Structure probing data (DMS and 2A3) for a 177-nucleotide construct. Conditions: 150 mM KOAc, 10 mM MgCl2 and 150 mM bicine (pH 8.5), 24 C. 2A3 adducts were read by reverse transcription with SuperScript II with manganese. The data come from the RNA Mapping Database (RMDB), libraries RFM100 and RFMREP. Reactivities are given for positions 27 through 126. DMS adducts were read by reverse transcription with MarathonRT.
RNA sequence: GGGAACGACUCGAGUAGAGUCGAAAAGAAAGAAAGAUUGUGACCCAUGGGCUUCCCUUUGUCAUCCUAUGCCUGAGAAUGCUGGAGAGGCAGGGACAGCAAAGGGAUGCUCAGAUGUUACCUCUAAAGUAAAUUUAGUCUUCGGACUAAAUUUACUAAAAGAAACAACAACAACAAC
Reactivity to DMS in 0.01 (KOAc 150mM, MgCl2 10mM, bicine 150mM(pH8.5), 24C), signal-to-noise 4, nucleotides 027 to 126: g020a080a070a120g000a090a100a070g000a190u000u010g000u000g020a060c010c060c060a270u010g000g000g000c000u000u000c000c000c000u000u000u000g010u000c040a300u000c010c000u010a080u010g020c010c010u000g000a180g000a140a090u030g010c120u020g030g000a170g000a020g010g030c000a050g010g000g000a010c050a220g010c010a000a000a010g000g000g000a000u000g000c010u000c010a000g000a110u000g000u000u010a050c060c090u010c010u000a050a210
Reactivity to 2A3 in 0.01 (KOAc 150mM, MgCl2 10mM, bicine 150mM(pH8.5), 24C), signal-to-noise 3, nucleotides 027 to 126: g140a040a050a000g140a060a140a010g080a130u140u140g020u050g090a110c020c030c040a050u040g000g000g000c000u020u000c020c010c000u000u010u010g040u050c010a020u020c000c000u150a280u210g000c000c000u120g020a090g150a170a140u230g110c090u170g080g130a200g030a000g150g000c020a010g000g010g010a010c030a000g010c000a000a000a000g000g020g000a000u000g010c000u000c000a000g000a010u080g010u010u040a040c020c000u010c030u090a120a070